The data come from the RNA Mapping Database (RMDB), library OK3TST. This 207-nucleotide RNA was probed chemically with 2A3. The RNA was probed in 150 mM KOAc, 10 mM MgCl2 and 150 mM bicine (pH 8.5) at 24 C.

RNA sequence: GGGAACGACUCGAGUAGAGUCGAAAAUGGGAAAUCGAAGAUUGAGGACUACUUUCCAGAAUUUGCUCGCUACACUACUCCUGAGGAUGGUGUGUAUGGCUUCCACUCUUGCUGGCUGUUCAUUGCGGUGGUUCUUUUUCAAACGGUCAGGCUGAAAGGCAUCUAAGACAUUCGUGUCUUAGAUGCCAAAAGAAACAACAACAACAAC
Reactivity to 2A3 in 0.01 (KOAc 150mM, MgCl2 10mM, bicine 150mM(pH8.5), 24C), signal-to-noise 1, nucleotides 027 to 156: u050g080g000g020a000a110a000u090c030g000a140a000g050a070u010u030g010a070g070g000a050c030u060a030c020u160u040u070c030c000a030g050a100a130u120u140u100g050c030u030c080g000c000u020a030c030a020c030u170a070c010u030c010c020u050g010a080g080g000a020u050g000g000u040g000u000g000u060a060u050g030g000c070u070u030c060c000a030c030u080c040u060u100g000c010u010g010g000c000u000g040u120u060c040a090u130u130g090c160g060g020u010g000g000u060u040c020u000u050u020u060u190c080a050a020a030c020g040g030u060c010a000g070g070c030u000g010a060a030a000